[RMDB]
RNA sequence: GGGAACGACUCGAGUAGAGUCGAAAAGAUAUGGAGCAGAGGGAGACAGUUAGCUGUGAAGGAGCCUUACAUCGGAAACGAUGUAAUGCUCCCACAGCUAACUGUCAUCGAUCUCUGCUCCUAAGUCGAUGUAAGAAAAGUUCGCUUUUCUUACAUCAAAAGAAACAACAACAACAAC
Reactivity to 2A3 in 0.01 (KOAc 150mM, MgCl2 10mM, bicine 150mM(pH8.5), 24C), signal-to-noise 2, nucleotides 027 to 126: g070a020u180a030u240g000g000a000g000c000a000g000a010g020g020g000a040g000a010c000a000g000u000u010a020g000c000u010g010u020g170a300a140g010g000a010g000c000c000u000u010a000c000a010u010c010g050g020a080a090a060c010g000a010u000g010u000a000a000u010g000c000u020c000c000c000a000c000a000g000c000u000a000a000c000u000g000u000c000a000u010c010g000a010u000c000u000c000u000g010c000u000c000c000u000a000a000g010u010c040
Reactivity to DMS in 0.01 (KOAc 150mM, MgCl2 10mM, bicine 150mM(pH8.5), 24C), signal-to-noise 6, nucleotides 027 to 126: g010a080u010a300u010g010g010a010g010c000a010g010a030g010g000g010a050g010a020c000a010g010u000u000a010g000c000u000g010u000g010a180a150g020g000a020g010c010c080u000u000a010c000a000u000c000g000g000a170a110a240c000g010a020u000g000u000a000a010u010g000c000u000c000c000c010a000c000a000g010c000u000a000a000c000u000g000u000c010a040u010c190g000a050u010c000u000c000u000g000c000u000c000c000u000a010a080g010u000c100